[RMDB]
RNA sequence: GGGAACGACUCGAGUAGAGUCGAAAACAAAGUAGGCACUUACGAAGAACUGAUCCCACAGGCAGAUUUGGUGGUUAACCUGACGCCAGACAAGCAGCACUCCGCAGUGGUUCAGGCGGUUCAGCCAUCAGAACUUUAGUUUCGACUAAAGUUCUGAAAAAGAAACAACAACAACAAC
Reactivity to 2A3 in 0.01 (KOAc 150mM, MgCl2 10mM, bicine 150mM(pH8.5), 24C), signal-to-noise 3, nucleotides 027 to 126: c040a030a100a000g100u100a080g070g040c050a030c070u060u070a020c150g070a040a090g040a150a010c030u050g010a060u040c010c020c000a020c020a010g050g000c020a040g020a220u110u070u090g070g020u040g020g030u070u060a050a040c000c020u040g030a010c010g000c030c000a020g040a020c010a000a050g020c020a000g020c010a030c050u060c020c060g020c020a050g040u030g030g010u080u070c040a030g000g030c020g040g000u090u070c000a020g000c000c010a020
Reactivity to DMS in 0.01 (KOAc 150mM, MgCl2 10mM, bicine 150mM(pH8.5), 24C), signal-to-noise 5, nucleotides 027 to 126: c080a100a090a120g010u010a070g020g020c040a080c060u000u000a070c090g010a110a080g000a090a110c070u010g010a090u000c010c010c020a120c110a040g000g010c040a060g000a100u000u000u010g000g010u000g010g020u000u000a070a080c100c040u010g010a070c120g020c020c020a050g000a070c100a080a090g020c030a070g000c050a090c040u020c050c050g010c050a050g030u010g000g020u000u000c070a070g000g010c030g010g010u000u000c040a070g000c020c050a160